[RMDB]
RNA sequence: GGGAACGACUCGAGUAGAGUCGAAAAAGAAAGAGAUCGCAGCUGCGAAAGAGGACGCGUAGGAUCCGAAAUACUCGAAGCAGCUAACCGGAAAACGGAAGGAUCCAUCCCAAAGGGAUCAAAAAAAACUUAGUUUAGGGUUCGCCCUAAACUAAGUAAAAGAAACAACAACAACAAC
Reactivity to 2A3 in 0.01 (KOAc 150mM, MgCl2 10mM, bicine 150mM(pH8.5), 24C), signal-to-noise 1, nucleotides 027 to 126: a010g040a010a030a010g110a010g010a020u080c040g030c180a010g000c000u010g010c020g040a130a070a070g000a020g020g030a020c030g030c030g110u080a060g030g120a030u010c030c010g020a020a040a070u160a060c020u010c040g010a050a010g000c000a000g010c000u000a010a050c000c000g070g050a090a300a030a070c000g020g010a050a000g150g010a030u030c010c000a030u030c010c000c000a030a030a010g000g030g030a040u000c000a010a070a070a010a000a010a010
Reactivity to DMS in 0.01 (KOAc 150mM, MgCl2 10mM, bicine 150mM(pH8.5), 24C), signal-to-noise 3, nucleotides 027 to 126: a060g020a110a100a140g000a100g010a020u000c020g010c150a030g020c010u000g000c000g000a030a110a300g010a010g000g000a100c230g010c100g010u000a120g010g000a060u000c050c030g000a040a080a060u010a120c020u000c010g000a110a220g000c030a010g010c020u010a100a060c000c010g000g000a060a070a120a090c010g000g010a120a090g030g000a030u000c000c040a100u000c010c000c010a050a070a110g020g000g000a070u020c020a000a000a020a060a050a040a070
Description
Structure probing data (2A3 and DMS) for a 177-nucleotide construct. High 2A3 reactivity points to a flexible backbone, as in loops and unpaired stretches. The RNA was probed in 150 mM KOAc, 10 mM MgCl2 and 150 mM bicine (pH 8.5) at 24 C. The data come from the RNA Mapping Database (RMDB), library M2PK90. For DMS, 1,694 sequencing reads were counted.